[RMDB]
RNA sequence: GGGAACGACUCGAGUAGAGUCGAAAAGAAUAAAUAGGGAGGUCAGGGUCAGCAGACCGCCGCUGAACCCAGGAUAACCCUCAAGGUCGGCGGUCUAAGCGACGAAAGACAGAGACACGUCGCAAAGACCCUGCACUAAUUUCGAUUAGUGCAGGGUAAAAGAAACAACAACAACAAC
Reactivity to DMS in 0.01 (KOAc 150mM, MgCl2 10mM, bicine 150mM(pH8.5), 24C), signal-to-noise 4, nucleotides 027 to 126: g000a150a100u040a070a060a090u010a090g000g000g000a050g020g010u000c010a080g010g010g000u000c020a040g000c070a070g000a010c000c000g000c000c010g000c090u000g020a060a050c020c010c010a110g000g000a120u020a100a100c100c010c000u010c190a110a110g020g000u020c030g000g010c000g010g010u010c000u010a060a170g000c000g000a030c000g000a070a040a090g010a090c150a090g000a130g000a050c150a160c000g000u000c010g010c010a050a050a140g020
Reactivity to 2A3 in 0.01 (KOAc 150mM, MgCl2 10mM, bicine 150mM(pH8.5), 24C), signal-to-noise 4, nucleotides 027 to 126: g040a010a060u230a090a080a050u170a070g080g030g010a100g020g060u070c050a020g030g000g010u000c000a010g000c000a010g030a000c020c010g000c020c000g000c000u020g030a090a100c000c000c000a020g050g030a040u080a210a190c020c000c000u010c050a040a040g080g070u110c020g010g000c000g000g000u000c000u000a020a040g000c000g010a000c000g050a110a120a010g100a060c070a070g110a010g010a100c010a020c070g000u000c000g000c000a010a000a010g010